[RMDB]
RNA sequence: GGGAACGACUCGAGUAGAGUCGAAAACUGAUAGCUCUGGCCUGGUAGCCACUGUGGUAAAUGCACCUCUGAGGCUUACUUGUAGAGGGAGAAGUAUGGUCCCAGGGUGGCCUCCAGUCUUCCUCUAGAUUAAUGCACGUUUCGACGUGCAUUAAUCAAAAGAAACAACAACAACAAC
Reactivity to DMS in 0.01 (KOAc 150mM, MgCl2 10mM, bicine 150mM(pH8.5), 24C), signal-to-noise 2, nucleotides 027 to 126: c050u010g010a110u000a090g020c040u010c060u000g020g000c060c050u030g000g000u000a120g020c010c000a040c030u000g010u010g000g020u000a040a100a120u000g020c130a040c010c010u000c030u000g020a070g000g010c020u000u000a020c030u010u000g000u010a030g010a020g020g010g000a030g000a050a020g000u000a030u010g020g000u000c040c030c070a090g010g000g040u010g010g010c030c010u000c070c050a070g000u000c000u010u000c000c010u000c040u000a110
Reactivity to 2A3 in 0.01 (KOAc 150mM, MgCl2 10mM, bicine 150mM(pH8.5), 24C), signal-to-noise 2, nucleotides 027 to 126: c030u060g050a140u110a100g010c020u010c080u090g080g060c010c010u060g020g030u030a010g000c030c010a040c050u090g020u100g040g030u070a060a140a130u200g020c060a030c020c000u000c020u020g040a030g050g020c030u060u100a040c030u070u100g060u140a010g000a010g000g010g010a040g010a030a010g040u070a040u130g000g000u020c050c020c050a040g120g000g050u150g000g030c000c010u030c020c000a070g010u000c000u000u000c000c010u030c020u020a030
This 177-nucleotide RNA was probed chemically with DMS and 2A3.
Conditions: 150 mM KOAc, 10 mM MgCl2 and 150 mM bicine (pH 8.5), 24 C.
Reactivities are given for positions 27 through 126.
For DMS, 2,305 sequencing reads were counted.
For 2A3, 2,458 sequencing reads were counted.